[RMDB]
RNA sequence: GGGAACGACUCGAGUAGAGUCGAAAAACUCUAGCAACUUGAAAAUCUAGAAUCAUCUGCCACAUUAACGGCAUUCUUUUUGCGUUUACUAUUUCGAUUCUUGUGAAUGUGGAAGAGUGUUGAGUAGAGCGGGACUACUGUUCGCAGUAGUCCCGCUAAAAGAAACAACAACAACAAC
Reactivity to 2A3 in 0.01 (KOAc 150mM, MgCl2 10mM, bicine 150mM(pH8.5), 24C), signal-to-noise 2, nucleotides 027 to 126: a020c000u010c000u000a090g000c090a060a280c000u230u300g050a090a030a000a240u050c010u010a000g040a030a030u070c030a040u000c030u080g030c030c000a240c000a270u080u300a140a070c010g050g000c060a000u020u020c070u100u000u010u120u150g020c020g000u000u100u000a100c000u120a210u000u220u000c190g200a230u260u000c080u000u260g020u040g000a000a000u000g000u040g090g000a000a000g000a000g000u000g000u000u020g000a060g150u100a000g000